[RMDB]
RNA sequence: GGGAACGACUCGAGUAGAGUCGAAAAGAUAUGGACAUGUUCCUACCAGCAACAGCAAGAAUCUGGACGAACAUCGGAAACGAUGUUCGUCCAGAUUCUUGACAUGCUGAGGACAUGUCCUAAGUCACCUUGAUAAUAGCUUCGGCUAUUAUCAAGGAAAAGAAACAACAACAACAAC
Reactivity to DMS in 0.01 (KOAc 150mM, MgCl2 10mM, bicine 150mM(pH8.5), 24C), signal-to-noise 2, nucleotides 027 to 126: g000a060u010a300u020g010g010a050c000a000u000g010u010u000c000c000u000a220c300c020a020g030c000a020a100c300a160g000c010a000a000g010a040a000u000c000u000g000g000a040c000g010a010a010c000a000u000c000g010g020a080a110a220c010g050a020u000g010u000u010c000g060u000c010c010a000g000a000u000u000c010u000u010g000a030c040a090u010g000c000u000g020a050g010g000a040c000a010u000g000u000c000c000u000a010a040g010u010c090a210
Source information:
The data come from the RNA Mapping Database (RMDB), library TTRINS. The record gives the reactivity of an RNA of 177 nucleotides to DMS. Conditions: 150 mM KOAc, 10 mM MgCl2 and 150 mM bicine (pH 8.5), 24 C.